[RMDB]
RNA sequence: GGGAACGACUCGAGUAGAGUCGAAAACGGACGCGGUGGCGUCGCCGCUUGUGCUGUACGCGACGUCGCUGUUGCAGACGCAGCUGCGUGUGAGCAACACUGUGCUGAGGUCGUUGCACGCGGGCGGAUCGGGUCGUGGUUUCGACCACGACCCGAUAAAAGAAACAACAACAACAAC
Reactivity to 2A3 in 0.01 (KOAc 150mM, MgCl2 10mM, bicine 150mM(pH8.5), 24C), signal-to-noise 2, nucleotides 027 to 126: c000g060g000a010c000g020c000g060g290u080g010g000c000g000u000c000g020c000c000g000c010u030u170g040u100g030c130u000g000u000a040c060g040c000g000a000c000g180u010c000g000c000u020g000u010u030g030c000a020g010a070c000g030c120a070g140c110u210g030c030g010u080g000u060g070a240g090c000a030a000c010a030c070u070g010u080g290c110u170g030a020g000g050u010c050g010u000u030g020c000a000c010g000c000g020g030g000c000g000g020
This 177-nucleotide RNA was probed chemically with 2A3. The 2A3 profile rests on 712 reads. Reactivities are given for positions 27 through 126. It was measured as part of the RMDB library OK1LIB.